[RMDB]
RNA sequence: GGGAACGACUCGAGUAGAGUCGAAAAUUACAUAAGUCUAACACCUUGUUUCGGACUAACAAGGGCGCAUGGAGGAUGGCCGUGCCUCCAUAGUUAGACGUCCGAGAACCAGCCGAAAUGAAAAAGAACUAUGCAGGGUAUUCGUACCCUGCAUAGUAAAAGAAACAACAACAACAAC
Reactivity to DMS in 0.01 (KOAc 150mM, MgCl2 10mM, bicine 150mM(pH8.5), 24C), signal-to-noise 3, nucleotides 027 to 126: u010u060a110c180a150u000a040a100g000u020c020u000a020a030c070a140c000c020u000u010g000u000u000u020c040g000g000a090c110u020a020a040c020a000a070g000g010g010c260g030c150a010u010g000g000a010g000g000a070u000g010g000c000c020g010u020g000c010c000u000c000c000a000u000a090g000u010u000a010g010a090c010g030u010c010c010g020a130g010a080a130c080c050a080g030c030c010g010a040a040a040u010g010a080a060a050a080a110g000a120
Reactivity to 2A3 in 0.01 (KOAc 150mM, MgCl2 10mM, bicine 150mM(pH8.5), 24C), signal-to-noise 4, nucleotides 027 to 126: u170u080a070c080a060u160a170a040g000u030c020u020a020a010c040a090c060c010u010u030g040u000u060u080c150g140g050a170c060u030a000a000c000a010a010g000g010g000c030g020c040a000u020g000g000a000g020g000a030u030g070g020c030c000g000u050g020c000c000u020c010c000a000u000a010g000u010u030a040g000a020c000g010u000c000c030g070a050g030a090a050c030c000a020g040c000c010g050a090a050a060u160g040a030a080a040a000a060g090a020
Chemical mapping of a 177-nucleotide RNA with DMS and 2A3. The data come from the RNA Mapping Database (RMDB), library OK1LIB. The DMS profile rests on 5,244 reads.